[RMDB]
The record gives the reactivity of an RNA of 177 nucleotides to 2A3. The reactions ran in a buffer of 150 mM KOAc, 10 mM MgCl2 and 150 mM bicine (pH 8.5), at 24 C.

RNA sequence: GGGAACGACUCGAGUAGAGUCGAAAAUGUGUGUGAUGAUGCCGAUGAUGCUGUUACUUGUUCUUUCUCUCUUGGCAUUUGUAAGCAGUUCAUAUGUUCAUGUGCAGUACCGCCGGCUCUGCACCAAGCCUGCCUACUGGUUCGCCAGUAGGCAGGCAAAAGAAACAACAACAACAAC
Reactivity to 2A3 in 0.01 (KOAc 150mM, MgCl2 10mM, bicine 150mM(pH8.5), 24C), signal-to-noise 1, nucleotides 027 to 126: u170g050u010g000u000g040u040g110a190u170g000a080u140g020c000c000g000a000u010g000a100u000g030c000u000g090u220u200a090c000u030u080g090u240u040c000u030u080u060c000u000c000u000c000u100u010g040g010c070a040u000u000u240g130u130a220a000g120c020a010g010u040u060c000a000u170a000u150g140u120u020c000a000u030g000u080g020c000a000g000u000a000c000c000g040c000c000g000g000c040u000c000u040g000c000a000c000c000a080a000